[RMDB]
RNA sequence: GGGAACGACUCGAGUAGAGUCGAAAAAGUCAUCAAUGGGGUCCGUUAGUAUAUCAAAGAUCUUGUUAUCGAUUGAUAGUGAAUGAAUCAGAUAGUGGUGUAGAGGAAUAUGUCCUUUUUUAUCCUUGCUAUCAAAGUUACGCAUGCCGUGGCGUAAUAUCAGCAUAACUUUCGAGUUAUGCUGAUAAAAAGAAACAACAACAACAAC
Reactivity to 2A3 in 0.01 (KOAc 150mM, MgCl2 10mM, bicine 150mM(pH8.5), 24C), signal-to-noise 4, nucleotides 027 to 156: a000g070u060c040a060u020c030a080a150u110g000g000g020g000u000c000c000g000u000u000a020g020u010a060u020a030u130c030a030a040a000g030a030u040c040u120u140g080u200u100a060u050c030g090a170u010u050g010a000u010a030g070u070g100a090a150u060g020a030a040u050c020a030g030a040u050a030g040u050g060g010u060g040u070a030g000a000g050g070a040a050u140a120u240g120u080c010c000u050u060u000u000u050u010a020u030c000c000u020u070g000c000u000a010u050c020a080a000a010g010u020u020a000c010g000c020a020u150g110c030c030g040u020g000g000c000g010u000a000a000
Reactivity to DMS in 0.01 (KOAc 150mM, MgCl2 10mM, bicine 150mM(pH8.5), 24C), signal-to-noise 5, nucleotides 027 to 156: a100g010u000c060a090u000c100a090a130u000g020g020g070g020u000c010c010g050u000u000a070g020u000a100u010a080u000c030a050a080a190g000a050u000c060u000u010g020u000u010a090u000c030g000a180u000u010g010a040u000a020g020u000g020a060a090u010g010a070a120u000c070a100g010a070u000a060g020u000g020g030u010g020u000a110g010a070g010g010a050a180u020a090u000g010u000c000c020u010u010u000u010u010u000a040u030c030c040u000u000g000c010u000a060u000c020a040a040a120g010u010u000a010c010g020c010a300u000g030c120c100g010u010g010g010c010g020u000a020a060
About this RNA
Conditions: 150 mM KOAc, 10 mM MgCl2 and 150 mM bicine (pH 8.5), 24 C. Structure probing data (2A3 and DMS) for a 207-nucleotide construct. In probing experiments dimethyl sulfate is read out at A N1 and C N3, which are open when not base-paired.